Background: The record gives the reactivity of an RNA of 207 nucleotides to DMS and 2A3.
[RMDB]
RNA sequence: GGGAACGACUCGAGUAGAGUCGAAAAGGGACGCCUUUAGAAGAAGAGGCUAGGUGGUAUUCCGGUGUGGGAUACUUGGUAAUAUGUAACGCUAAUUGCAUAAGAUUGUAGGACGGGAUUUACAGUCAAAACGGUCCUGCGUUCGCGCAGGACCGAACAACUAAUAUGCCUUCGGGCAUAUUAGUUGAAAAGAAACAACAACAACAAC
Reactivity to DMS in 0.01 (KOAc 150mM, MgCl2 10mM, bicine 150mM(pH8.5), 24C), signal-to-noise 1, nucleotides 027 to 156: g020g030g010a110c150g000c000c020u020u000u000a150g020a120a160g000a150a090g000a020g010g010c030u010a050g060g040u010g000g020u010a040u000u000c030c030g040g040u010g020u030g020g000g010a060u000a030c030u000u010g000g010u000a060a130u020a080u000g030u010a020a150c110g020c060u000a070a190u000u010g000c040a090u000a040a080g000a040u010u010g050u000a080g040g000a110c090g000g010g000a300u000u000u000a020c010a060g070u000c020a040a070a090a130c010g090g020u000c000c010u000g010c010g010u000u000c270g050c040g000c040a030g000g000a000c020c010g010a000a050
Reactivity to 2A3 in 0.01 (KOAc 150mM, MgCl2 10mM, bicine 150mM(pH8.5), 24C), signal-to-noise 4, nucleotides 027 to 156: g010g000g010a020c060g030c000c010u090u070u070a190g040a260a020g030a040a010g010a030g020g000c010u050a030g000g080u050g030g010u050a070u060u050c040c060g070g110u220g040u190g060g000g000a020u010a040c030u020u090g020g000u040a050a070u030a100u100g030u050a070a000c040g010c170u110a110a070u070u070g000c000a010u010a080a050g020a080u030u050g020u030a020g020g080a030c070g020g020g020a020u090u080u060a030c030a020g020u020c010a010a000a070a080c020g000g000u000c000c000u000g000c000g000u020u040c170g000c000g000c060a020g000g000a000c000c010g000a000a000

About this RNA
For DMS, 2,474 sequencing reads were counted.